[RMDB]
Notes
This 177-nucleotide RNA was probed chemically with 2A3 and DMS.

RNA sequence: GGGAACGACUCGAGUAGAGUCGAAAAGAACUCACCUUCGGGUGAGUUCAAACCCGAUGAAGCGGCACUUUGACAGCUUCAUACACCUAAGAAGUGCAAUAAAAACAACGCGGUUCGCCGCGUUGAAUCAAGAUUAGUAGUUCGCUACUAAUCUUGAAAAAGAAACAACAACAACAAC
Reactivity to 2A3 in 0.01 (KOAc 150mM, MgCl2 10mM, bicine 150mM(pH8.5), 24C), signal-to-noise 4, nucleotides 027 to 126: g000a010a000c000u000c000a000c000c000u020u060c140g080g000g000u000g000a000g000u000u000c000a010a000a000c000c000c000g000a060u050g020a010a010g020c050g030g010c050a020c110u140u120u140g100a110c060a020g000c000u000u000c000a000u010a000c100a030c010c040u090a110a040g060a080a010g050u020g040c040a040a050u180a100a100a010a000a010c000a000a000c000g010c010g000g080u030u040c250g020c060c010g020c000g000u000u000g000a000a010
Reactivity to DMS in 0.01 (KOAc 150mM, MgCl2 10mM, bicine 150mM(pH8.5), 24C), signal-to-noise 5, nucleotides 027 to 126: g010a010a010c000u000c010a000c000c000u000u010c250g030g010g030u010g000a010g020u000u000c000a030a110a140c000c010c000g020a050u000g020a010a010g020c020g010g010c030a070c140u000u020u010g010a090c070a110g010c010u000u000c020a030u000a140c120a040c070c060u000a130a090g010a100a100g010u010g010c100a170a090u020a030a060a090a140a150c010a000a010c000g010c000g000g000u000u020c200g020c010c010g030c000g010u000u000g010a060a070